Overview: This 177-nucleotide RNA was probed chemically with DMS and 2A3. For 2A3 the reverse transcriptase was SuperScript II with manganese. The reactions ran in a buffer of 150 mM KOAc, 10 mM MgCl2 and 150 mM bicine (pH 8.5), at 24 C. It was measured as part of the RMDB library RFMREP. DMS (dimethyl sulfate) methylates the pairing face of unpaired adenines and cytosines.

[RMDB]
RNA sequence: GGGAACGACUCGAGUAGAGUCGAAAAACGGACGUCACUUCCUUCUUGUUACUUAAAUUGCUGGGGGGCUCCCAACACCUGGACUUUUGGCACCACGAGGUCAACACCCUGAUUACAAAAGCCUUAGCUUAUUUACAAACUUCGGUUUGUAAAUAAGAAAAGAAACAACAACAACAAC
Reactivity to DMS in 0.01 (KOAc 150mM, MgCl2 10mM, bicine 150mM(pH8.5), 24C), signal-to-noise 2, nucleotides 027 to 126: a110c100g020g000a070c080g000u000c040a060c030u010u000c010c000u010u000c050u010u000g010u000u000a080c070u000u020a040a090a100u000u010g010c060u000g030g000g030g000g010g000c090u010c030c010c010a070a110c100a070c050c060u010g010g000a080c060u010u000u000u020g020g020c020a060c030c030a080c050g000a100g010g000u000c030a030a100c100a050c040c020c040u000g000a080u000u020a120c150a070a050a070a130g010c080c030u010u000a030g010
Reactivity to 2A3 in 0.01 (KOAc 150mM, MgCl2 10mM, bicine 150mM(pH8.5), 24C), signal-to-noise 1, nucleotides 027 to 126: a000c000g000g040a010c090g000u000c010a020c070u070u030c000c000u070u070c000u020u090g050u060u060a080c020u070u130a040a150a250u100u120g000c030u050g020g010g000g010g050g030c000u020c000c000c000a020a020c000a010c010c020u040g020g020a010c000u050u090u080u140g010g000c010a020c030c020a030c030g070a050g000g060u000c000a010a040c000a040c050c000c010u030g040a100u030u180a070c020a020a140a020a010g020c010c020u000u020a030g050